[RMDB]
RNA sequence: GGGAACGACUCGAGUAGAGUCGAAAAGAAAGAAAGAAAGAAAGGUAUGAAGUCCUAUUCACUCUUGAUAGGAUAAACUUCAUAUUGAUCGUGUAUGUGCUAACGCACAUACACGAAUGCGCAUGCAGAACUGCAUGCAUGAACAUAAAGGGUGCAAUAAAUUUAUGAUGUUCGCAUCAUAAAUUUAAAAAGAAACAACAACAACAAC
Reactivity to 2A3 in 0.01 (KOAc 150mM, MgCl2 10mM, bicine 150mM(pH8.5), 24C), signal-to-noise 5, nucleotides 027 to 156: g040a010a040a000g060a060a050a010g070a050a090a010g080a060a100a000g020g000u000a010u000g000a000a000g020u010c000c000u000a010u020u060c040a020c030u040c010u030u050g000a000u010a000g020g010a030u090a080a130a020c000u000u000c000a000u000a020u030u070g030a050u030c000g010u010g000u000a000u000g010u010g010c070u150a120a030c190g000c000a000c000a000u000a000c000a000c000g010a010a000u040g010c010g000c010a000u010g000c010a000g090a300a080c210u030g000c010a010u000g000c000a020u090g040a030a040c060a050u160a090a030a020g020g020g000u060g030c040a060a100
Reactivity to DMS in 0.01 (KOAc 150mM, MgCl2 10mM, bicine 150mM(pH8.5), 24C), signal-to-noise 3, nucleotides 027 to 156: g000a120a050a110g010a110a070a110g010a120a080a140g000a140a070a180g000g020u000a010u000g020a030a030g040u010c000c010u000a000u000u010c120a100c130u000c140u010u050g010a020u000a000g020g010a130u010a080a090a090c010u000u000c010a010u000a030u000u000g000a110u000c000g020u010g020u000a020u000g030u000g010c000u000a120a230c300g000c000a020c000a000u000a000c000a010c000g000a000a020u000g030c060g010c000a000u000g020c010a030g020a100a180c170u000g000c030a070u000g000c000a020u000g020a080a040c050a060u000a080a050a130g010g010g020u000g000c030a080a130
An RNA of 207 nucleotides, treated with 2A3 and DMS and read out base by base. For DMS, 6,295 sequencing reads were counted. The reactions ran in a buffer of 150 mM KOAc, 10 mM MgCl2 and 150 mM bicine (pH 8.5), at 24 C. The 2A3 profile rests on 5,783 reads.